[RMDB]
RNA sequence: GGGAACGACUCGAGUAGAGUCGAAAAACAGAAAAAAGGAGUUUAAAUUAGAUUUGCCAACGGACGGUACUAAAUACCGUCACUUUUACGUCUAACUUAUCGUUAACUCUGCAAAAAGAAAACAAGAAAAACAAGCGUGAGUUCGCUCACGCUUGAACAUUUGGGACAUGUUCGCAUGUCCCAAAUGAAAAGAAACAACAACAACAAC
Reactivity to DMS in 0.01 (KOAc 150mM, MgCl2 10mM, bicine 150mM(pH8.5), 24C), signal-to-noise 1, nucleotides 027 to 156: a050c000a240g000a010a070a060a110a090a100g020g000a010g060u000u000u010a000a020a080u020u000a010g010a070u010u010u010g100c030c170a030a040c060g010g040a030c000g050g050u000a010c040u010a080a000a300u000a000c000c030g040u000c010a030c060u000u000u000u000a150c040g010u000c010u000a030a010c000u000u000a030u000c100g000u000u010a030a040c030u030c010u010g000c130a020a100a070a160a030g000a000a040a180a100c040a040a060g030a060a080a040a100a120c000a040a010g080c000g000u000g030a010g060u000u000c300g000c020u000c000a010c000g000c000u000u000g000a000a030
Reactivity to 2A3 in 0.01 (KOAc 150mM, MgCl2 10mM, bicine 150mM(pH8.5), 24C), signal-to-noise 2, nucleotides 027 to 156: a000c030a050g170a040a080a000a000a010a030g050g010a060g040u150u110u120a040a100a050u080u030a010g040a070u050u020u150g050c030c000a040a030c050g020g000a010c010g000g010u010a030c050u210a040a080a110u110a000c000c010g000u000c010a030c000u080u050u010u100a020c010g000u000c020u030a020a040c020u040u100a020u160c020g060u010u000a000a000c000u000c020u050g000c030a100a000a000a090a000g030a030a080a010a040c070a000a130g120a090a110a020a000a010c000a000a000g020c000g000u000g000a010g020u050u060c160g020c050u000c000a010c000g010c000u000u000g000a000a000